[RMDB]
RNA sequence: GGGAACGACUCGAGUAGAGUCGAAAAUCUUAGCGUUUCGACGCUAAGAAAACGUGGUGGAGGAGGUGGAAAGCUCGGCAUUAAAGGCAUAAAAACAUCUUCAUAUAGGGUCGUUCGCGACCCUAAACACUGAAAAGAGGUUCGCCUCUUUUCAGUGAAAAGAAACAACAACAACAAC
Reactivity to DMS in 0.01 (KOAc 150mM, MgCl2 10mM, bicine 150mM(pH8.5), 24C), signal-to-noise 4, nucleotides 027 to 126: u000c000u000u000a000g010c000g010u000u010u020c180g010a020c010g010c000u000a000a000g010a020a030a060a100c130g030u000g020g030u000g010g010a110g010g000a070g010g010u000g010g000a070a100a090g000c030u000c080g020g010c070a040u000u000a040a050a100g000g010c030a080u010a050a050a050a080a060c140a050u010c050u010u000c070a110u020a160u000a020g010g000g020u000c000g000u000u000c210g000c020g000a010c010c010c000u000a000a040a110
Reactivity to 2A3 in 0.01 (KOAc 150mM, MgCl2 10mM, bicine 150mM(pH8.5), 24C), signal-to-noise 2, nucleotides 027 to 126: u020c000u000u000a010g000c010g020u000u040u150c230g070a010c000g000c010u010a000a010g000a000a010a000a000c030g070u040g000g090u090g030g070a040g010g050a010g000g040u050g030g040a080a020a010g010c040u030c040g030g020c030a020u060u100a090a090a030g040g010c050a010u170a090a140a000a010a010c020a070u070c030u120u060c110a040u180a020u030a200g000g000g000u000c000g000u030u010c030g020c000g010a000c000c010c000u000a020a000a000